[RMDB]
RNA sequence: GGGAACGACUCGAGUAGAGUCGAAAAGAGCAAAUGCCUUAUGUGCACUUGCUGCAGUGGCUGAUGCGAGCAAAGCCGACGAAGUUGGAAGAGAAGAUAGAUGAUAAGGAAGGUGCUCAUGGUGCAUGGCUCGAUGGCUGUUCGCAGCCAUCGAGCCAAAAGAAACAACAACAACAAC
Reactivity to 2A3 in 0.01 (KOAc 150mM, MgCl2 10mM, bicine 150mM(pH8.5), 24C), signal-to-noise 1, nucleotides 027 to 126: g050a000g050c000a000a000a000u120g000c000c000u260u160a120u040g300u270g130c010a000c010u050u150g050c030u010g000c030a000g000u130g110g030c070u050g010a000u120g000c000g030a090g090c220a040a220a060g000c000c000g000a000c050g000a010a010g050u090u090g030g120a110a110g010a070g020a200a000g010a010u160a000g070a050u220g110a090u090a190a000g010g080a000a000g220g000u000g000c080u000c000a070u080g070g140u050g000c090a080u080